[RMDB]
RNA sequence: GGGAACGACUCGAGUAGAGUCGAAAAUCGUACCUAUCUUGAUUCACGUACGGCACAACAGUUGACAAUCGAAGUGCUCGUCACAGUCGAUGGUGUUAAUUUUAGAACUGUGGUUCUAAAUAAUAAGACACCUAAACGACUUCGGUCGUUUAGGUGUAAAAGAAACAACAACAACAAC
Reactivity to DMS in 0.01 (KOAc 150mM, MgCl2 10mM, bicine 150mM(pH8.5), 24C), signal-to-noise 2, nucleotides 027 to 126: u010c060g020u000a070c020c020u010a020u030c060u000u000g030a100u000u000c090a040c210g000u000a030c070g010g010c030a050c030a090a150c080a050g010u000u000g030a030c110a110a120u000c030g010a050a220g020u000g000c000u000c080g000u000c060a040c030a060g000u000c000g020a050u000g010g030u000g000u000u000a040a050u000u000u000u040a030g000a000a050c010u000g030u020g010g000u000u000c000u000a000a030a000u000a050a120u030a090a150g010
Reactivity to 2A3 in 0.01 (KOAc 150mM, MgCl2 10mM, bicine 150mM(pH8.5), 24C), signal-to-noise 1, nucleotides 027 to 126: u060c010g030u030a080c000c000u040a060u000c040u000u120g090a080u090u100c030a030c230g030u050a000c000g000g040c030a040c000a040a220c010a060g020u080u120g160a020c050a000a050u090c000g030a040a000g020u000g020c060u160c070g040u070c040a000c000a030g130u050c010g010a100u060g100g000u040g100u160u080a110a120u030u040u000u060a010g000a000a040c040u090g120u220g220g040u020u000c000u000a040a010a030u100a010a000u220a170a060g110
Source: RMDB library OK2TST, as collected in RNAgym. Structure probing data (DMS and 2A3) for a 177-nucleotide construct. Values cover nucleotides 27 to 126. The reactions ran in a buffer of 150 mM KOAc, 10 mM MgCl2 and 150 mM bicine (pH 8.5), at 24 C. For 2A3 the reverse transcriptase was SuperScript II with manganese. DMS adducts were read by reverse transcription with MarathonRT. The DMS profile rests on 1,099 reads.